The record gives the reactivity of an RNA of 207 nucleotides to 2A3 and DMS. The 2A3 profile rests on 1,011 reads. Conditions: 150 mM KOAc, 10 mM MgCl2 and 150 mM bicine (pH 8.5), 24 C. DMS adducts were read by reverse transcription with MarathonRT.

[RMDB]
RNA sequence: GGGAACGACUCGAGUAGAGUCGAAAAGGUUAGUUUUACCCUACUGUAAGUAUUUUUGAGUGAACUUUGAUAGUACGAGAGGAACUCUAAGUGAUGACCACUGGUAGUGCGAUUAACUAUUAAGUUAUGUUGCUUAGCUACGUCGUUUCGAUUAAGGCAUUAAAUCCUCGUUCGCGAGGAUUUAAUGAAAAGAAACAACAACAACAAC
Reactivity to 2A3 in 0.01 (KOAc 150mM, MgCl2 10mM, bicine 150mM(pH8.5), 24C), signal-to-noise 3, nucleotides 027 to 156: g010g000u050u050a010g010u080u110u050u140a140c010c020c030u060a070c030u080g090u190a080a090g050u000a110u110u150u030u100u090g100a060g010u050g050a080a050c010u100u070u070g060a040u050a040g070u030a050c030g020a010g010a020g090g050a080a050c000u030c010u050a060a090g000u050g030a020u070g040a020c010c010a050c080u000g050g000u030a020g050u010g120c080g060a080u040u030a000a030c020u010a010u180u090a060a050g000u000u040a020u110g090u010u020g010c000u080u030a040g000c020u070a040c070g090u070c000g000u030u010u030c020g010a060u230u070a090a020g040g000
Reactivity to DMS in 0.01 (KOAc 150mM, MgCl2 10mM, bicine 150mM(pH8.5), 24C), signal-to-noise 2, nucleotides 027 to 156: g060g020u000u000a060g010u000u000u000u010a100c040c010c020u010a070c020u020g050u000a090a130g010u000a050u010u000u000u000u020g010a100g000u000g020a070a060c050u000u000u010g030a120u010a070g020u010a090c070g020a130g000a120g010g000a050a070c060u000c020u010a060a060g050u010g000a060u000g010a050c060c070a050c040u000g020g010u010a020g040u010g010c060g010a090u010u000a050a020c030u010a060u000u010a040a110g030u010u000a100u000g000u010u000g000c020u010u000a080g000c080u000a090c110g050u020c050g030u010u000u000c000g000a120u000u010a090a150g030g020